[RMDB]
RNA sequence: GGGAACGACUCGAGUAGAGUCGAAAACAGUUCUUGCCUAGGACUCCGGCGAAGAGCAGUUCGGUGACAUCUUCGACGGGGAGGUACCUCACGUGGAAGUCUUCGUUGGCGUAGUUCUGGAAAGCAAAGGAUAGCUUUCCGGAUAGGUGCUCCAUCACCCAUGUGGAACAUUCGUGUUCCACAUGGGAAAAGAAACAACAACAACAAC
Reactivity to 2A3 in 0.01 (KOAc 150mM, MgCl2 10mM, bicine 150mM(pH8.5), 24C), signal-to-noise 1, nucleotides 027 to 156: c040a030g020u120u040c030u050u080g030c000c030u030a050g000g050a030c000u000c010c030g020g040c030g040a030a000g020a020g070c070a020g090u120u060c060g030g080u040g000a040c020a060u000c020u040u020c010g090a050c080g040g040g020g000a030g050g000u070a160c010c000u070c010a080c080g060u020g010g030a050a060g030u020c000u050u040c080g000u060u040g000g010c000g040u070a060g120u010u040c010u000g000g000a000a000a000g000c050a100a090a100g220g040a160u170a110g030c000u000u000u000c000c010g020g000a030u030a030g000g000u020g020c000u000c040c010a080u090c040a110
An RNA of 207 nucleotides, treated with 2A3 and read out base by base. The data come from the RNA Mapping Database (RMDB), library OK3TST. For 2A3, 912 sequencing reads were counted. Reactivities are rounded to 0.1 and cut off at 0 and 3. The RNA was probed in 150 mM KOAc, 10 mM MgCl2 and 150 mM bicine (pH 8.5) at 24 C.